An RNA of 207 nucleotides, treated with 2A3 and read out base by base. Reactivities are given for positions 27 through 156. Values are in units of 0.01, from 0 to 300, in steps of 10. It was measured as part of the RMDB library RNAMAK. The reactions ran in a buffer of 150 mM KOAc, 10 mM MgCl2 and 150 mM bicine (pH 8.5), at 24 C. For 2A3, 2,818 sequencing reads were counted.
RNA sequence: GGGAACGACUCGAGUAGAGUCGAAAAGGGGUCCAAGGAAUCGGAGGGAGAGACAUGCUCUGAAGCCUCCACGGAGCAACAGCUCUCCUACCCACCCGAUACCUUGGACGGAGGCACCCAAAACUACACUCCGAGACUUCGGUCUCGGAGUGUAGAAGCUUAUUACGCAGUUCGCUGCGUAAUAAGCAAAAGAAACAACAACAACAAC
Reactivity to 2A3 in 0.01 (KOAc 150mM, MgCl2 10mM, bicine 150mM(pH8.5), 24C), signal-to-noise 2, nucleotides 027 to 156: g070g020g010g000u000c010c010a000a000g000g000a050a020u000c000g020g000a030g010g020g000a000g010a000g010a030c090a150u290g010c000u000c010u020g030a100a040g010c000c000u000c000c000a000c030g010g010a000g020c040a050a070c030a160g070c000u000c000u010c000c000u010a030c020c020c010a040c000c000c020g000a000u100a140c000c000u000u000g000g000a010c010g000g000a000g000g020c000a020c000c010c000a050a050a040a040c000u000a000c000a000c000u010c010c010g000a000g000a010c040u200u300c300g090g010u000c000u010c000g000g000a000g000u010g010u000a000g000a000a000